The record gives the reactivity of an RNA of 177 nucleotides to DMS. DMS adducts were read by reverse transcription with MarathonRT. Reactivities are rounded to 0.1 and cut off at 0 and 3. The DMS profile rests on 688 reads. The data come from the RNA Mapping Database (RMDB), library OK2TRN. The reactions ran in a buffer of 150 mM KOAc, 10 mM MgCl2 and 150 mM bicine (pH 8.5), at 24 C.
RNA sequence: GGGAACGACUCGAGUAGAGUCGAAAACACAUCCAAAUAAGGAAUUUCUUCUCCAGAAUGGAUCAAAAACCAAGAGUUGUGAGGGUCACAGGUGCGCCGGUGAAGAAAAGAUCUGGUGUAAGCAAGAUGACACAAUCGAAUUCGUUCGAUUGUGUCAAAAAGAAACAACAACAACAAC
Reactivity to DMS in 0.01 (KOAc 150mM, MgCl2 10mM, bicine 150mM(pH8.5), 24C), signal-to-noise 1, nucleotides 027 to 126: c130a120c160a080u000c030c000a060a130a120u020a160a190g060g000a080a080u000u000u030c080u010u000c040u000c010c020a080g000a140a090u000g000g030a120u030c080a010a050a060a050a190c030c020a060a030g000a140g030u000u000g000u000g010a170g000g010g000u000c070a030c130a040g000g030u000g000c000g050c050c100g000g000u010g000a020a030g030a050a090a000a080g000a060u010c030u020g010g020u000g030u000a110a110g010c100a040a050g000a110